Chemical mapping of a 177-nucleotide RNA with DMS and 2A3. Values cover nucleotides 27 to 126. The DMS profile rests on 1,432 reads. The reactions ran in a buffer of 150 mM KOAc, 10 mM MgCl2 and 150 mM bicine (pH 8.5), at 24 C.
RNA sequence: GGGAACGACUCGAGUAGAGUCGAAAAGGUUUCACUAUGUUAGCCAAGAUGGUCUCAAUCUCUUGACCUCGUGAUCUGCCGCCUCAACCUCCCAAAAUGCUGGGAUUACAGGUGUGAGCCACUGCGCCACUUUUGUGACGUUCGCGUCACAAAAGUGAAAAGAAACAACAACAACAAC
Reactivity to DMS in 0.01 (KOAc 150mM, MgCl2 10mM, bicine 150mM(pH8.5), 24C), signal-to-noise 1, nucleotides 027 to 126: g020g000u000u000u000c000a080c100u010a050u000g000u010u010a120g040c060c030a030a050g010a030u010g010g000u010c090u000c100a100a060u000c060u000c010u000u000g000a040c040c040u000c130g020u010g000a060u010c040u000g030c070c040g010c040c010u000c050a060a090c110c110u000c000c010c000a020a050a060a010u000g010c070u010g020g000g010a060u000u010a060c150a090g010g020u010g030u000g010a140g000c020c010a040c040u000g010c070g010c130
Reactivity to 2A3 in 0.01 (KOAc 150mM, MgCl2 10mM, bicine 150mM(pH8.5), 24C), signal-to-noise 1, nucleotides 027 to 126: g050g010u000u020u050c000a000c040u110a060u160g050u080u070a010g050c010c000a020a070g080a140u110g030g080u080c000u000c050a040a120u000c050u040c020u050u070g010a050c080c020u000c050g030u020g050a070u000c070u140g070c050c070g000c030c000u050c000a040a050c000c010u080c040c010c010a020a040a000a040u210g000c050u040g000g010g040a000u040u050a040c080a020g100g000u020g090u050g140a020g110c000c060a060c070u090g060c020g020c010